An RNA of 177 nucleotides, treated with DMS and 2A3 and read out base by base.
The 2A3 profile rests on 1,277 reads.
DMS adducts were read by reverse transcription with MarathonRT.
It was measured as part of the RMDB library OK1LIB.
RNA sequence: GGGAACGACUCGAGUAGAGUCGAAAAACGCUGAGCUUUGAUUUGUCCGCAGCAGCUCCGCCGUGAUCACCUCGACAACCUCUCGGAUCUGAGACACACGCGGACACAGACCCAAAGAGGAAGGAAGGACUGGGAGUGGAUUCGUCCACUCCCAGUCAAAAGAAACAACAACAACAAC
Reactivity to DMS in 0.01 (KOAc 150mM, MgCl2 10mM, bicine 150mM(pH8.5), 24C), signal-to-noise 1, nucleotides 027 to 126: a000c160g000c000u000g000a130g120c030u000u000u000g000a050u050u040u060g050u050c000c000g080c010a260g000c040a050g030c050u000c030c050g000c090c050g030u030g000a180u000c050a080c110c000u000c010g010a150c080a050a160c000c000u000c000u000c300g000g000a050u000c000u000g030a070g040a000c090a000c200a030c040g000c030g000g000a000c070a120c130a110g000a070c080c000c000a080a220a090g000a000g000g080a050a200g000g010a160a070g000
Reactivity to 2A3 in 0.01 (KOAc 150mM, MgCl2 10mM, bicine 150mM(pH8.5), 24C), signal-to-noise 2, nucleotides 027 to 126: a000c040g020c010u020g000a010g000c010u080u100u180g100a120u110u130u220g070u020c010c010g030c000a060g030c010a030g000c040u010c010c050g000c000c040g040u020g010a040u070c000a040c060c000u060c030g110a020c020a070a090c040c000u020c000u000c030g080g000a140u000c010u090g060a060g050a100c040a000c010a020c130g090c050g000g000a000c000a000c020a030g030a030c000c000c020a060a300a000g020a010g000g020a040a030g070g010a040a080g070